Record summary: Chemical mapping of a 177-nucleotide RNA with 2A3. The 2A3 profile rests on 536 reads. 2A3 adducts were read by reverse transcription with SuperScript II with manganese. Values cover nucleotides 27 to 126. It was measured as part of the RMDB library RFM100.
RNA sequence: GGGAACGACUCGAGUAGAGUCGAAAAUAUCGGAGUCCGAUUUAGCCAUGCUAGUCGCACGAGUUUAGACUCGUAGCAUAUAGCUCAGUAACACGUGGCCCAACUACCCUACAGACCGCGAUAACCUGCCGCUCAGUAGUUUCGACUACUGAGCGGCAAAAGAAACAACAACAACAAC
Reactivity to 2A3 in 0.01 (KOAc 150mM, MgCl2 10mM, bicine 150mM(pH8.5), 24C), signal-to-noise 1, nucleotides 027 to 126: u190a030u080c030g040g020a010g090u000c000c020g000a000u080u030u080a060g050c000c000a030u020g000c000u080a000g020u060c080g030c000a010c000g000a010g000u090u150u280a180g150a000c000u000c020g000u030a050g000c040a010u060a000u050a130g000c000u000c000a090g040u000a160a000c010a000c020g110u080g040g000c000c000c000a000a010c000u000a000c000c000c000u000a000c070a000g080a030c020c000g030c000g060a000u090a040a040c010c010u040